[RMDB]
RNA sequence: GGGAACGACUCGAGUAGAGUCGAAAAGACACGACGGAGACGUCGUGUCAAAGAGUGGGAAACCACUCAAAGAGCCACAGCUUCGGCUGUGGCUCAAGGCGGGGCACCGUCCCCGGAAUAAACGGAAAAUCAUUAUGGUAUUCGUACCAUAAUGAUUAAAAGAAACAACAACAACAAC
Reactivity to 2A3 in 0.01 (KOAc 150mM, MgCl2 10mM, bicine 150mM(pH8.5), 24C), signal-to-noise 4, nucleotides 027 to 126: g000a000c000a000c020g000a000c010g030g000a060g030a060c000g010u000c000g000u000g000u000c000a000a000a000g000a000g000u020g000g010g010a020a050a070c000c000a000c000u000c000a020a050a000g000a000g010c000c010a000c000a020g040c010u110u140c290g080g030c010u010g020u010g010g010c010u000c000a010a000g000g010c010g000g010g010g000c030a020c050c010g280u300c000c000c000c000g010g020a030a040u120a030a020a010c010g000g000a070a140
Reactivity to DMS in 0.01 (KOAc 150mM, MgCl2 10mM, bicine 150mM(pH8.5), 24C), signal-to-noise 4, nucleotides 027 to 126: g010a000c000a010c000g010a020c000g010g000a260g000a230c000g030u000c010g010u000g000u000c000a020a060a110g000a010g030u000g010g010g000a180a120a230c000c000a010c000u000c000a030a070a100g000a010g010c000c000a010c000a010g010c000u000u010c270g030g010c010u010g050u000g010g010c010u000c010a020a060g010g010c060g010g000g000g010c010a100c010c010g000u000c000c000c000c000g010g000a030a050u000a000a010a000c000g000g000a090a120